An RNA of 207 nucleotides, treated with 2A3 and DMS and read out base by base. The RNA was probed in 150 mM KOAc, 10 mM MgCl2 and 150 mM bicine (pH 8.5) at 24 C. For 2A3, 8,587 sequencing reads were counted. 2A3 adducts were read by reverse transcription with SuperScript II with manganese. The DMS profile rests on 10,033 reads.
[RMDB]
RNA sequence: GGGAACGACUCGAGUAGAGUCGAAAACGAUCAGUACGUUCGCGUACUGAUCGAAGCUACUGGAGACAGUAGCCAGUCGCAGACCUUGUUUGGCGGUAACAAGGAUUACAUUAAGUAGGCAGGUCUUAAUGACUGCGACAACCGCCAUCCUGCCUUAUAGAUUGAUAGGAUUCGUCCUAUCAAUCUAAAAAGAAACAACAACAACAAC
Reactivity to 2A3 in 0.01 (KOAc 150mM, MgCl2 10mM, bicine 150mM(pH8.5), 24C), signal-to-noise 4, nucleotides 027 to 156: c020g000a000u010c000a000g000u000a010c010g010u010u050c180g000c000g060u000a000c000u000g000a000u000c000g000a000a000g000c000u000a000c000u000g000g010a020g010a030c000a000g000u000a000g000c000c010a020g010u000c000g010c000a000g010a100c000c000u000u000g020u010u020u050g070g040c020g040g040u030a010a000c000a000a000g020g010a030u040u120a020c010a010u010u000a000a000g000u030a080g010g000c000a000g000g010u010c000u000u000a000a000u010g020a020c010u010g000c000g010a000c010a010a040c020c040g030c020c000a010u060c000c000u000g000c000c000u020u060a070
Reactivity to DMS in 0.01 (KOAc 150mM, MgCl2 10mM, bicine 150mM(pH8.5), 24C), signal-to-noise 3, nucleotides 027 to 156: c030g010a000u000c000a010g010u000a000c000g030u000u010c300g060c040g040u000a000c010u000g010a000u000c000g000a030a050g010c000u010a010c010u000g020g000a300g000a300c010a020g010u000a020g030c000c040a070g010u000c010g030c000a060g000a300c020c000u000u000g010u010u000u010g030g050c000g000g010u000a080a040c020a040a040g000g010a170u000u000a090c040a050u000u010a010a050g010u000a080g000g000c000a010g010g010u000c010u000u000a000a020u000g000a060c000u000g010c020g010a030c020a040a090c060c050g000c090c060a060u000c000c000u010g000c020c020u000u010a140